[RMDB]
Record summary:
This 207-nucleotide RNA was probed chemically with 2A3.

RNA sequence: GGGAACGACUCGAGUAGAGUCGAAAAAGCGAUGAUACGUCAUCGCAACGAUUGCCUGAUCGUAAAACAGGAGACGGCCGUGGCCGCGUCCACGUAAAAAAGCGUAACGUGGUCUACGGACCACGAAAAAAGCGCGGAACGUUCGCGUUCCGCGCAACAUAGCAAUGCUCUUCGGAGCAUUGCUAUGAAAAGAAACAACAACAACAAC
Reactivity to 2A3 in 0.01 (KOAc 150mM, MgCl2 10mM, bicine 150mM(pH8.5), 24C), signal-to-noise 2, nucleotides 027 to 156: a000g000c000g010a010u000g010a010u020a100c220g080u020c000a000u010c000g000c000a000a010c000g000a000u010u040g000c010c000u000g000a010u020c050g110u210a000a000a050a010c010a030g030g040a020g080a060c120g050g020c030c000g000u010g000g000c010c000g000c000g020u020c020c060a000c030g000u070a030a050a040a050a020a010g010c020g040u030a040a030c010g000u000g010g000u010c030u050a040c140g010g010a010c000c000a020c010g050a100a010a000a000a020a000g000c000g000c000g000g010a000a000c010g010u060u060c210g000c010g090u000u000c000c000g000c000g000c000a000a000
For 2A3, 1,980 sequencing reads were counted.
Reactivities are rounded to 0.1 and cut off at 0 and 3.
Conditions: 150 mM KOAc, 10 mM MgCl2 and 150 mM bicine (pH 8.5), 24 C.
It was measured as part of the RMDB library M2RFPK.